[RMDB]
RNA sequence: GGGAACGACUCGAGUAGAGUCGAAAAACGCGCUCGGGGGUGCUAUUUGCUUCCAUCAUGCCUCCUGAACUAACUGACGCCACAGCGCCUCAUGGGGCCGUGGGAUAACUGAGCUGUAUAUCAAUAAUAUUACAGAGGUAUUCGUACCUCUGUAAUAAAAAGAAACAACAACAACAAC
Reactivity to DMS in 0.01 (KOAc 150mM, MgCl2 10mM, bicine 150mM(pH8.5), 24C), signal-to-noise 6, nucleotides 027 to 126: a100c090g010c140g010c050u000c040g020g000g020g010g020u000g020c050u010a090u000u010u000g010c080u000u000c050c020a080u010c090a090u000g010c010c000u000c010c010u010g010a040a090c130u000a090a120c110u010g000a080c130g000c020c090a050c070a060g020c050g020c040c010u010c160a100u000g010g000g000g020c010c060g030u000g010g000g000a090u010a050a100c090u000g000a080g010c040u000g010u010a060u010a140u010c050a060a110u010a060a170
Reactivity to 2A3 in 0.01 (KOAc 150mM, MgCl2 10mM, bicine 150mM(pH8.5), 24C), signal-to-noise 3, nucleotides 027 to 126: a000c020g040c000g020c010u010c040g010g000g010g030g020u080g020c020u110a190u110u080u140g020c000u100u010c040c010a120u090c020a030u160g010c000c020u010c000c030u030g010a050a040c030u040a030a020c020u040g060a020c060g070c030c000a030c010a020g050c050g070c060c000u110c030a180u230g010g000g050g000c010c010g020u020g000g000g010a030u030a090a030c070u030g010a010g080c020u030g090u080a110u060a020u280c000a010a050u220a190a030
An RNA of 177 nucleotides, treated with DMS and 2A3 and read out base by base. It was measured as part of the RMDB library OK2TST.